An RNA of 177 nucleotides, treated with DMS and 2A3 and read out base by base. For 2A3 the reverse transcriptase was SuperScript II with manganese. For DMS, 1,199 sequencing reads were counted. The 2A3 profile rests on 942 reads.
RNA sequence: GGGAACGACUCGAGUAGAGUCGAAAAAUCUCGCGAAUCAGGUUGCGCGCCCACUUCCGCGGUUCCUCGCGGUUGUCGUGGUAAAGGAUCAGAUCCAGCGGGCCAUGCUUGUCGAACCGCAUCAGGCAGCAUUGAGGGAGUUCGCUCCCUCAAUGCUAAAAGAAACAACAACAACAAC
Reactivity to DMS in 0.01 (KOAc 150mM, MgCl2 10mM, bicine 150mM(pH8.5), 24C), signal-to-noise 1, nucleotides 027 to 126: a110u040c000u000c030g000c060g010a000a120u020c090a130g000g000u000u000g000c140g000c220g070c000c000c040a130c060u000u000c000c000g130c000g000g000u040u000c180c080u000c000g000c090g000g010u000u000g000u000c020g110u000g000g000u000a010a140a100g000g000a000u000c180a040g000a300u000c060c040a000g050c000g030g080g000c070c000a090u060g000c070u040u010g040u000c010g000a000a080c120c160g010c110a190u080c090a160g000g010c120
Reactivity to 2A3 in 0.01 (KOAc 150mM, MgCl2 10mM, bicine 150mM(pH8.5), 24C), signal-to-noise 2, nucleotides 027 to 126: a000u040c000u000c000g000c050g070a010a060u060c050a090g080g000u050u110g060c050g010c000g030c000c000c000a000c000u040u020c000c010g000c000g040g000u130u050c000c010u110c030g020c000g020g000u000u000g020u080c040g040u130g020g050u030a100a070a200g080g000a030u080c000a040g020a090u040c000c000a010g000c030g010g000g000c040c060a030u060g020c040u060u030g020u000c020g010a030a040c040c000g020c000a080u030c070a050g070g000c030